[RMDB]
RNA sequence: GGGAACGACUCGAGUAGAGUCGAAAAAAAAAGGAGGAUGAGAAAUAUAGAGAGAGAUCGGUCCUCCCACGCGCGUCUCUCUCUGAUAAGAGGGAUAACAGGAUGAUUAAUAGAUAGCGCGCAAAAAGCAUAUAUGAAACUUCGGUUUCAUAUAUGCAAAAGAAACAACAACAACAAC
Reactivity to DMS in 0.01 (KOAc 150mM, MgCl2 10mM, bicine 150mM(pH8.5), 24C), signal-to-noise 2, nucleotides 027 to 126: a010a030a080a060a070g000g040a010g010g000a020u000g000a130g000a080a130a120u000a140u010a050g000a120g010a060g000a040g000a050u000c020g020g020u010c010c010u010c030c010c090a060c090g020c030g040c030g030u000c010u000c010u000c000u000c010u000g020a120u020a070a040g010a050g010g010g010a060u000a020a080c110a080g000g020a150u020g000a150u000u000a040a110u010a070g000a020u020a050g010c010g010c020g060c150a030a050a030a060a080
Reactivity to 2A3 in 0.01 (KOAc 150mM, MgCl2 10mM, bicine 150mM(pH8.5), 24C), signal-to-noise 2, nucleotides 027 to 126: a010a000a000a000a000g010g020a010g020g010a020u060g010a030g050a150a240a020u160a040u190a120g080a020g000a000g010a000g010a100u030c040g000g020u000c010c000u000c010c010c000a040c010g000c000g000c000g010u010c000u000c000u000c010u000c000u030g020a040u050a170a030g020a030g020g010g020a030u040a150a000c050a090g200g000a080u140g070a020u080u270a150a130u010a070g060a040u050a070g000c000g000c000g000c030a050a080a000a000a000